[RMDB]
RNA sequence: GGGAACGACUCGAGUAGAGUCGAAAACGUUGGCGCGCUUGUUGCCAAUGAGGGUUGGAGUGCAUCCGAGGACGCCCUGACUGCUGUCAUCACUGCCGCUUAUCUUACCAUAUGUCAUCAACGCUACGUCCCUUAAGUGGUUCGCCACUUAAGGGACAAAAGAAACAACAACAACAAC
Reactivity to DMS in 0.01 (KOAc 150mM, MgCl2 10mM, bicine 150mM(pH8.5), 24C), signal-to-noise 2, nucleotides 027 to 126: c050g020u000u020g000g020c020g030c050g030c270u010u000g030u030u010g020c020c010a030a020u000g030a130g030g000g010u000u000g020g020a100g010u000g010c050a100u000c050c060g010a090g010g020a110c080g010c020c050c030u010g010a080c080u010g000c030u000g030u000c060a030u010c040a040c060u000g010c020c020g000c020u000u000a090u000c030u000u000a060c080c020a060u000a060u010g010u010c030a110u020c050a040a040c160g000c090u020a090c300
Reactivity to 2A3 in 0.01 (KOAc 150mM, MgCl2 10mM, bicine 150mM(pH8.5), 24C), signal-to-noise 2, nucleotides 027 to 126: c000g040u000u040g040g030c020g010c010g080c120u110u210g110u200u180g110c000c030a040a020u070g020a040g000g030g000u030u040g030g030a050g050u090g020c010a010u000c010c030g010a040g050g020a010c010g050c000c010c000u020g040a020c020u060g030c000u000g040u040c010a020u050c050a020c010u020g040c030c010g130c010u050u090a040u040c010u000u100a110c040c020a090u070a040u210g030u050c010a020u010c010a070a090c070g010c040u070a090c100
An RNA of 177 nucleotides, treated with DMS and 2A3 and read out base by base. It was measured as part of the RMDB library OK2TRN. High DMS reactivity at an A or C suggests that its Watson-Crick edge is free. For DMS, 2,039 sequencing reads were counted. The reactions ran in a buffer of 150 mM KOAc, 10 mM MgCl2 and 150 mM bicine (pH 8.5), at 24 C.